Structure probing data (2A3) for a 177-nucleotide construct. The RNA was probed in 150 mM KOAc, 10 mM MgCl2 and 150 mM bicine (pH 8.5) at 24 C. It was measured as part of the RMDB library RFM100.

RNA sequence: GGGAACGACUCGAGUAGAGUCGAAAAACAGCAAAAACAAGCAAAUAUCUCUAGAGGGGAUUAAUCCCUCUGCUUCAAAGUAACCAAAACAAAGAAAGCUGAGCCAGCUUUGCUGGGUACCACACCUCCACAACAUCGUUUUCGAACGAUGUUGUGGAAAAGAAACAACAACAACAAC
Reactivity to 2A3 in 0.01 (KOAc 150mM, MgCl2 10mM, bicine 150mM(pH8.5), 24C), signal-to-noise 2, nucleotides 027 to 126: a000c000a000g000c010a040a010a010a110a020c020a070a030g000c000a000a060a210u190a120u040c050u030c000u110a000g010a000g020g000g000g120a230u210u190a130a090u130c020c000c060u000c000u050g010c000u000u070c000a020a000a230g020u070a070a070c060c010a000a000a000a170c050a010a110a000g150a190a050a000g030c000u020g000a020g020c010c040a030g000c020u050u110u000g000c010u000g010g020g020u060a050c000c000a000c020a020c020c020u000